[RMDB]
RNA sequence: GGGAACGACUCGAGUAGAGUCGAAAAGUACGCACUAAAUCACAUGCAUCACUGAAUUCAGAUCAUGCGAAAAAUAGUACUGCAAUGUUGCAUAAUGAUCGUGAUUUGUACAAUGAAGUUCAUUACGGCGCAAUAUGCGAUUCGUCGCAUAUUGCGCAAAAGAAACAACAACAACAAC
Reactivity to 2A3 in 0.01 (KOAc 150mM, MgCl2 10mM, bicine 150mM(pH8.5), 24C), signal-to-noise 1, nucleotides 027 to 126: g000u000a040c020g000c060a030c080u110a090a090a090u000c000a020c000a110u000g080c010a010u000c000a010c060u090g100a130a280u280u050c000a000g070a140u100c030a060u100g000c000g130a060a000a000a000a000u120a130g100u110a040c030u010g050c020a000a230u100g000u140u070g060c000a040u010a010a060u090g060a080u060c060g180u040g110a110u000u120u250g090u060a020c000a000a000u190g010a240a000g080u050u000c000a010u140u210a020c090g160
Reactivity to DMS in 0.01 (KOAc 150mM, MgCl2 10mM, bicine 150mM(pH8.5), 24C), signal-to-noise 1, nucleotides 027 to 126: g000u000a020c100g040c020a080c050u010a140a150a030u000c020a010c090a030u000g020c070a000u000c020a060c230u000g000a130a090u000u000c090a060g010a090u000c110a050u000g000c030g000a000a040a000a130a110u000a030g000u000a110c040u030g020c040a060a080u000g010u000u000g030c020a090u000a010a080u000g040a030u000c020g010u000g000a120u000u000u010g040u030a010c140a070a020u020g000a070a160g020u010u000c050a050u000u000a120c230g030

The record gives the reactivity of an RNA of 177 nucleotides to 2A3 and DMS. For DMS, 640 sequencing reads were counted. Values cover nucleotides 27 to 126. The 2A3 profile rests on 542 reads.